[RMDB]
RNA sequence: GGGAACGACUCGAGUAGAGUCGAAAAGAGCUGAAGUUCGCUUCAGCUCAAAACAAAACUGUACACGCAGUAGAGAAAAACAAAAACAAAAAUGCGUAAAAAAAAGAUAGCAGUUCGCUGCUAUCAACGUUUCAUUGAAGUUCGCUUCAAUGAAACGAAAAGAAACAACAACAACAAC
Reactivity to 2A3 in 0.01 (KOAc 150mM, MgCl2 10mM, bicine 150mM(pH8.5), 24C), signal-to-noise 1, nucleotides 027 to 126: g000a010g000c020u010g010a000a000g010u020u100c140g090c070u020u000c010a010g000c000u050c010a000a000a000a010c010a000a060a010a000c010u050g030u120a080c000a000c150g010c000a000g000u080a030g030a040g090a110a140a080a000a020c090a030a180a010a020a000c060a010a200a120a010a000u040g030c010g040u150a130a020a150a020a000a000a000a040g000a010u010a000g000c010a000g030u030u060c190g000c060u000g000c010u010a020u010c000a000a000